[RMDB]
RNA sequence: GGGAACGACUCGAGUAGAGUCGAAAAGUGGUCGAGUCCGAAGGACUGGGGUAGUGAAAUAAAGAGAGAGAGAGCUACCCCGUCUGUCAGUCACUCUCUGUCUGAGUCUCUCUCUCAAAGACCACAACAUCAGUAUCGGAUUCGUCCGAUACUGAUGAAAAGAAACAACAACAACAAC
Reactivity to DMS in 0.01 (KOAc 150mM, MgCl2 10mM, bicine 150mM(pH8.5), 24C), signal-to-noise 5, nucleotides 027 to 126: g020u010g000g000u000c020g010a100g020u010c050c050g010a130a100g000g000a020c020u000g050g020g000g020u000a020g030u000g010a060a070a100u010a060a050a070g000a050g010a030g000a040g000a080g020a300g010c010u000a020c020c000c000c000g010u010c060u010g000u040c080a050g000u020c070a090c150u020c080u020c060u000g010u000c040u020g000a080g000u010c010u000c000u000c000u000c020u000c020a080a090a120g010a010c010c010a010c010a140a190
Reactivity to 2A3 in 0.01 (KOAc 150mM, MgCl2 10mM, bicine 150mM(pH8.5), 24C), signal-to-noise 8, nucleotides 027 to 126: g050u030g010g020u010c020g040a020g070u020c030c020g050a100a060g050g010a000c080u110g000g000g010g010u010a010g010u020g140a130a060a050u230a110a240a010g020a000g000a000g000a000g000a000g000a010g000c000u010a000c000c020c000c000g000u030c010u010g050u020c020a010g020u040c020a040c070u100c030u030c050u060g050u030c030u030g020a020g040u010c000u000c000u000c000u000c000u000c010a030a030a000g010a010c010c000a010c030a070a040